[RMDB]
RNA sequence: GGGAACGACUCGAGUAGAGUCGAAAAGACCGCUCCUUUGCCCGAAGCCUUUCCGGAGCUUGCUGCCAAAGGAACCGCAUCGCCGCCAAUCUCGCACUUGCACAAACUUAUAUUGCACUGCAGUAUGAGCACCGGAUUCGUUCGCGAAUCCGGUGCUAAAAGAAACAACAACAACAAC
Reactivity to 2A3 in 0.01 (KOAc 150mM, MgCl2 10mM, bicine 150mM(pH8.5), 24C), signal-to-noise 1, nucleotides 027 to 126: g020a020c030c000g000c000u020c020c040u160u000u210g010c000c000c000g050a050a010g000c020c000u100u170u040c020c040g010g000a040g000c020u000u020g000c010u000g010c000c000a000a040a040g070g000a090a000c010c020g000c020a000u000c000g080c010c000g010c020c000a080a000u050c020u000c110g000c000a080c070u000u060g000c030a000c050a160a180a000c000u110u020a000u020a000u300u030g040c040a030c300u170g000c000a000g000u020a080u030g040